This 177-nucleotide RNA was probed chemically with 2A3 and DMS. 2A3 adducts were read by reverse transcription with SuperScript II with manganese. Values cover nucleotides 27 to 126. For DMS the reverse transcriptase was MarathonRT. The reactions ran in a buffer of 150 mM KOAc, 10 mM MgCl2 and 150 mM bicine (pH 8.5), at 24 C.
RNA sequence: GGGAACGACUCGAGUAGAGUCGAAAACACCGGUGUGGGUGCAGGCGGGAAGGAAUGUGCCUAGCGGGUGUGGCGAGGAGUGUAGCCAGCUGUGGGUUUUUCUUGGGGCCCAGAGAGACAUGGGCAGAUGUUAUCUGCUAUUCGUAGCAGAUAACAUAAAAGAAACAACAACAACAAC
Reactivity to 2A3 in 0.01 (KOAc 150mM, MgCl2 10mM, bicine 150mM(pH8.5), 24C), signal-to-noise 9, nucleotides 027 to 126: c040a010c000c010g060g020u120g020u140g040g020g030u070g020c030a030g050g070c060g050g030g040a040a020g050g030a090a060u070g020u060g050c010c010u020a030g030c030g020g010g010u060g010u040g040g010c030g020a050g040g020a060g040u080g020u080a020g040c020c010a020g010c040u040g010u080g050g040g020u020u040u010u030u010c040u030u080g040g000g080g000c000c000c000a010g020a000g010a010g010a040c050a120u040g000g010g000c010a010g010
Reactivity to DMS in 0.01 (KOAc 150mM, MgCl2 10mM, bicine 150mM(pH8.5), 24C), signal-to-noise 8, nucleotides 027 to 126: c080a100c040c020g000g020u010g010u020g010g000g010u000g010c070a050g010g000c080g010g010g010a130a080g010g010a060a060u010g010u010g010c030c020u010a170g010c050g000g000g010u010g010u010g000g010c080g000a070g010g000a060g000u010g010u020a090g000c050c040a080g000c050u010g020u000g000g000g000u000u000u010u000u010c040u010u010g000g010g000g000c010c010c010a020g000a100g010a150g010a100c150a110u010g000g000g010c030a120g000